This 177-nucleotide RNA was probed chemically with 2A3 and DMS. The reactions ran in a buffer of 150 mM KOAc, 10 mM MgCl2 and 150 mM bicine (pH 8.5), at 24 C. High 2A3 reactivity points to a flexible backbone, as in loops and unpaired stretches. For 2A3 the reverse transcriptase was SuperScript II with manganese. For 2A3, 946 sequencing reads were counted.
[RMDB]
RNA sequence: GGGAACGACUCGAGUAGAGUCGAAAAUCAGAUGAGACUAGACAUCAGACUAGAUAGUAUCACACUACUGGUACAUAGUAGAGACAUACAUAGAUGAGUAUGACACAUCAGAGGCGCGGGCCACCGACGCCAGCAUGCGUUUCGACGCAUGCUGGCGAAAAGAAACAACAACAACAAC
Reactivity to 2A3 in 0.01 (KOAc 150mM, MgCl2 10mM, bicine 150mM(pH8.5), 24C), signal-to-noise 1, nucleotides 027 to 126: u100c010a010g030a040u000g000a030g020a090c030u070a010g050a040c010a070u080c040a020g080a180c020u070a060g090a190u070a010g020u010a030u110c030a040c020a020c110u120a060c020u040g050g000u090a050c020a080u070a020g020u020a030g020a000g000a030c000a020u070a030c010a010u100a000g060a060u090g040a020g100u090a040u090g020a000c010a000c020a070u090c010a000g040a080g080g010c060g020c000g040g020g050c010c000a010c010c020g060a060
Reactivity to DMS in 0.01 (KOAc 150mM, MgCl2 10mM, bicine 150mM(pH8.5), 24C), signal-to-noise 2, nucleotides 027 to 126: u000c070a050g010a040u000g030a090g000a090c070u000a060g020a090c140a050u000c130a050g020a070c060u000a050g000a120u010a070g010u000a090u010c150a080c170a070c050u000a000c030u000g010g000u010a100c110a070u000a010g000u000a020g000a110g000a150c110a070u000a040c040a080u000a060g000a080u020g000a090g000u000a030u000g000a200c110a050c090a060u000c040a090g000a060g000g010c040g000c050g020g000g020c020c040a080c060c050g010a140